[RMDB]
Chemical mapping of a 177-nucleotide RNA with DMS.
The reactions ran in a buffer of 150 mM KOAc, 10 mM MgCl2 and 150 mM bicine (pH 8.5), at 24 C.

RNA sequence: GGGAACGACUCGAGUAGAGUCGAAAAAGGCAGGAUCCACCUUGAUGUUGAACGGUCCGGCGAUGGACUCGUUUCCUGCAAAAUCGAUGGCCUUUAUGAUCACGUUGUGGGUACCGGGUUUUGUCUCCCGGUAGCAUGGGUUCGCCCAUGCUACCGGAAAAGAAACAACAACAACAAC
Reactivity to DMS in 0.01 (KOAc 150mM, MgCl2 10mM, bicine 150mM(pH8.5), 24C), signal-to-noise 1, nucleotides 027 to 126: a080g010g000c000a040g010g000a080u010c030c010a050c070c040u000u000g000a080u010g010u000u010g030a060a040c090g000g000u000c010c020g020g010c200g030a150u000g000g000a030c020u010c050g010u010u010u000c040c050u010g000c130a050a030a110a060u010c040g010a090u000g010g010c010c020u000u000u000a080u020g000a020u000c030a050c030g000u000u000g030u000g030g000g010u000a060c090c030g000g010g010u000u000u020u020g000u000c140u000c050